[RMDB]
An RNA of 207 nucleotides, treated with 2A3 and DMS and read out base by base.

RNA sequence: GGGAACGACUCGAGUAGAGUCGAAAACAACGCCGCCGCGCACGCGUUCUACCGUGCGAUGGGGAUGACCCGGCUGCCGUUGGACGACGGCCCCGCCAUCCGGUUCGGCCGACCACUGGGUGGGCGGUACCGCCGCGUCCGGGAGAAUGGGUGACGGCAGCACACAUUUUUUCGAAAAUGUGUGCUGAAAAGAAACAACAACAACAAC
Reactivity to 2A3 in 0.01 (KOAc 150mM, MgCl2 10mM, bicine 150mM(pH8.5), 24C), signal-to-noise 3, nucleotides 027 to 156: c050a020a050c040g050c050c020g060c010c010g050c010g000c050a000c010g130c020g060u110u010c060u220a180c030c020g060u140g010c000g050a140u100g010g000g020g020a060u230g010a030c000c000c000g000g000c010u060g050c010c000g130u110u200g000g000a000c020g050a020c000g000g000c000c000c000c010g010c000c000a010u020c000c000g070g030u120u300c070g060g040c110c100g170a300c000c020a020c000u020g030g000g000u040g030g200g000c020g000g000u060a140c040c050g020c000c010g000c000g000u000c000c000g010g020g000a020g010a060a050u110g000g060g000u010g020a010c020g020g020
Reactivity to DMS in 0.01 (KOAc 150mM, MgCl2 10mM, bicine 150mM(pH8.5), 24C), signal-to-noise 1, nucleotides 027 to 156: c020a110a060c040g010c010c010g050c000c010g020c020g000c010a040c020g000c040g000u010u000c150u000a080c090c010g020u000g020c000g020a110u010g000g000g000g000a190u000g010a150c010c020c010g000g020c030u000g020c020c010g040u000u010g040g010a050c000g000a050c010g000g000c000c070c010c010g040c000c000a020u000c000c020g000g020u000u010c040g040g000c100c200g020a150c060c030a060c030u010g010g040g000u020g030g020g030c000g020g000u000a030c000c030g030c000c000g020c040g010u000c040c010g030g020g010a120g000a120a100u010g020g030g040u000g000a030c020g000g010